[RMDB]
RNA sequence: GGGAACGACUCGAGUAGAGUCGAAAACUCAUCGGUCGCAAGUUCAAGGACAAGGAGGUGCAGCGAGAUGCCAAGAUGGUGUCGUACAAGGUGGUGGACAAGGCCGCCAAGCCCUACGUGGAGGUCAAUACAGUCAAGGAUUCGUCCUUGACUGUAUAAAAGAAACAACAACAACAAC
Reactivity to DMS in 0.01 (KOAc 150mM, MgCl2 10mM, bicine 150mM(pH8.5), 24C), signal-to-noise 8, nucleotides 027 to 126: c020u000c020a110u000c060g010g020u000c050g010c080a060a090g010u010u000c100a080a090g000g010a060c100a090a120g010g010a060g010g030u000g010c040a070g010c070g010a090g010a060u000g010c030c030a080a120g000a090u010g020g030u010g030u000c030g020u000a050c130a070a100g010g020u000g010g020u000g000g010a080c160a080a120g000g000c010c020g000c030c030a050a110g010c020c010c020u000a080c130g010u000g010g000a070g010g000u000c060a080
Reactivity to 2A3 in 0.01 (KOAc 150mM, MgCl2 10mM, bicine 150mM(pH8.5), 24C), signal-to-noise 4, nucleotides 027 to 126: c020u020c000a040u080c060g060g010u030c030g000c080a060a070g040u070u070c040a080a070g050g020a050c030a040a060g070g010a030g000g040u080g030c020a020g020c020g070a090g010a080u060g020c010c010a050a060g090a140u180g010g040u040g040u050c050g000u040a040c020a110a030g030g020u030g030g000u030g000g030a030c050a110a070g070g000c000c000g020c020c000a010a020g030c030c000c000u050a060c060g050u080g020g030a030g020g010u060c030a000
Background: Structure probing data (DMS and 2A3) for a 177-nucleotide construct. DMS adducts were read by reverse transcription with MarathonRT. 2A3 adducts were read by reverse transcription with SuperScript II with manganese. The RNA was probed in 150 mM KOAc, 10 mM MgCl2 and 150 mM bicine (pH 8.5) at 24 C.